[RMDB]
RNA sequence: GGGAACGACUCGAGUAGAGUCGAAAAGUUCGUGAAACUGAGCAUGUUCUCUAUGGAUUUAAUACUCGUGGAGAACGCGAGUGUUUCCGUAUGUUAAUUUCAUUUUCAGGAGUGGGACCUAAGACAGCGCUCACAUACUAUUCGUAGUAUGUGAGCGAAAAGAAACAACAACAACAAC
Reactivity to DMS in 0.01 (KOAc 150mM, MgCl2 10mM, bicine 150mM(pH8.5), 24C), signal-to-noise 3, nucleotides 027 to 126: g020u010u000c020g000u000g010a050a020a040c020u010g020a300g010c100a110u010g030u000u000c000u010c010u000a030u010g000g010a060u000u010u020a120a100u020a040c070u000c000g010u000g000g020a090g000a030a050c020g000c010g000a150g000u000g000u000u010u000c020c010g000u000a030u010g020u000u000a050a110u010u000u010c040a070u000u000u000u000c090a120g010g000a050g020u010g010g000g010a090c040c040u020a060a100g020a100c170a050g010
Reactivity to 2A3 in 0.01 (KOAc 150mM, MgCl2 10mM, bicine 150mM(pH8.5), 24C), signal-to-noise 2, nucleotides 027 to 126: g010u030u030c020g000u040g240a030a010a000c010u010g000a010g080c050a120u200g010u000u010c000u000c020u010a020u020g110g010a020u070u100u140a190a090u150a080c010u010c020g020u010g020g010a040g040a110a040c010g000c000g000a040g060u120g010u000u000u000c000c000g010u040a020u120g060u030u140a190a100u100u120u060c040a070u030u070u040u040c060a050g000g070a020g030u010g000g030g000a040c010c020u060a080a000g060a050c040a030g090